Chemical mapping of a 177-nucleotide RNA with DMS. Values cover nucleotides 27 to 126. It was measured as part of the RMDB library RFM100.
[RMDB]
RNA sequence: GGGAACGACUCGAGUAGAGUCGAAAAAUCACCAUUAAAUUUGGCACAGAUCUCUAGAAAAGUCAAAUCUUACACCCAUGUGAUAAUUUUUCUAGAGAUCUGUGCCAAAUUUAAUAGUGAUCCUUUGUUGAAUGUCUAGUUUCGACUAGACAUUCAAAAAAGAAACAACAACAACAAC
Reactivity to DMS in 0.01 (KOAc 150mM, MgCl2 10mM, bicine 150mM(pH8.5), 24C), signal-to-noise 1, nucleotides 027 to 126: a100u020c000a000c000c020a010u010u000a000a000a030u010u000u000g000g000c030a000c000a010g000a000u010c010u000c000u000a000g000a000a000a000a000g030u020c110a100a090a100u010c040u010u040a090c080a160c170c150c200a130u030g000u000g000a030u010a050a010u000u000u000u000u000c010u000a010g010a000g000a000u010c000u000g000u000g020c010c000a000a000a000u000u000u000a000a000u000a090g010u000g000a010u000c070c000u000u020u000g020